[RMDB]
RNA sequence: GGGAACGACUCGAGUAGAGUCGAAAAGAUAUGGAUGUAGGCGCGAAACGUCCCAUCGGAAACGAUGGCGACGGAGCCUAAUCCUAAGUCAAACAUCAGCCGUUAAGUUCGCUUAACGGCUGAUGAACAGACACUAGAGGUUCGCCUCUAGUGUCUGAAAAGAAACAACAACAACAAC
Reactivity to 2A3 in 0.01 (KOAc 150mM, MgCl2 10mM, bicine 150mM(pH8.5), 24C), signal-to-noise 2, nucleotides 027 to 126: g040a030u070a030u160g030g000a020u060g190u300a000g020g000c030g000c100g180a160a140a070c000g000u000c000c000c000a000u000c000g020g000a090a070a000c010g000a010u000g000g070c100g000a000c010g000g040a010g000c000c000u010a010a010u000c000c000u000a100a020g050u030c040a150a040a080c000a020u000c000a000g000c010c000g000u000u000a000a000g000u060u160c280g010c180u010u000a000a010c000g020g000c000u010g010a000u010g000a000a000
Reactivity to DMS in 0.01 (KOAc 150mM, MgCl2 10mM, bicine 150mM(pH8.5), 24C), signal-to-noise 3, nucleotides 027 to 126: g010a010u000a290u000g000g000a010u000g020u000a000g020g010c000g000c070g000a050a060a140c000g000u000c000c000c000a000u000c000g010g000a110a070a150c000g000a030u000g000g000c250g010a010c010g000g010a120g000c000c000u000a020a010u000c010c000u010a060a140g010u000c020a140a120a190c000a000u000c000a010g000c000c000g000u000u000a000a010g000u000u020c190g000c000u000u010a000a000c010g000g000c000u000g000a000u000g000a050a200
An RNA of 177 nucleotides, treated with 2A3 and DMS and read out base by base.
2A3 adducts were read by reverse transcription with SuperScript II with manganese.
The data come from the RNA Mapping Database (RMDB), library TTRDEL.
For DMS, 3,532 sequencing reads were counted.
High 2A3 reactivity points to a flexible backbone, as in loops and unpaired stretches.
The RNA was probed in 150 mM KOAc, 10 mM MgCl2 and 150 mM bicine (pH 8.5) at 24 C.